[RMDB]
RNA sequence: GGGAACGACUCGAGUAGAGUCGAAAACUCUUGCACAGAAUCACCUUUCUAUAAUAACCAGUGCAAGAAGGGUUAUUAUACCAUUUAAUGUGCCGAGGCCACGCGGAGUACGAUCGAAGGUACAGCAAAAACGUGAAGUACUUCGGUACUUCACGAACUGUCUACAAUUCUUCGGAAUUGUAGACAGAAAAGAAACAACAACAACAAC
Reactivity to 2A3 in 0.01 (KOAc 150mM, MgCl2 10mM, bicine 150mM(pH8.5), 24C), signal-to-noise 5, nucleotides 027 to 156: c010u000c000u000u000g010c000a020c000a010g100a120a100u150c030a150c030c010u130u260u130c120u120a020u010a030a010u010a000a010c010c000a000g000u000g000c000a000a000g010a010a010g010g000g000u000u010a000u010u000a000u020a050c020c040a120u090u190u210a170a120u240g050u060g050c000c000g010a020g030g000c010c010a020c040g020c020g000g030a040g100u300a030c050g100a210u030c010g020a060a010g010g000u020a010c000a010g000c000a020a020a010a030a040c010g010u000g000a000a000g000u000a000c000u020u050c120g040g000u000a000c000u000u000c030a000c000g000a010a010
Reactivity to DMS in 0.01 (KOAc 150mM, MgCl2 10mM, bicine 150mM(pH8.5), 24C), signal-to-noise 2, nucleotides 027 to 156: c020u000c010u010u020g000c020a060c010a110g030a130a110u000c110a140c060c030u000u000u000c100u030a100u010a040a030u000a020a020c020c010a300g020u000g050c040a060a060g020a060a140g030g010g000u000u000a010u000u000a040u000a060c140c070a090u000u000u010a100a120u030g000u000g040c010c100g000a170g010g040c010c050a050c070g000c030g010g020a140g010u010a030c020g020a130u000c000g020a070a120g040g000u000a020c000a070g050c070a040a070a040a100a120c030g100u000g000a020a040g000u000a010c010u000u000c200g070g010u010a000c000u010u010c000a010c000g020a020a040
Source information
This 207-nucleotide RNA was probed chemically with 2A3 and DMS. The reactions ran in a buffer of 150 mM KOAc, 10 mM MgCl2 and 150 mM bicine (pH 8.5), at 24 C. The 2A3 profile rests on 4,023 reads.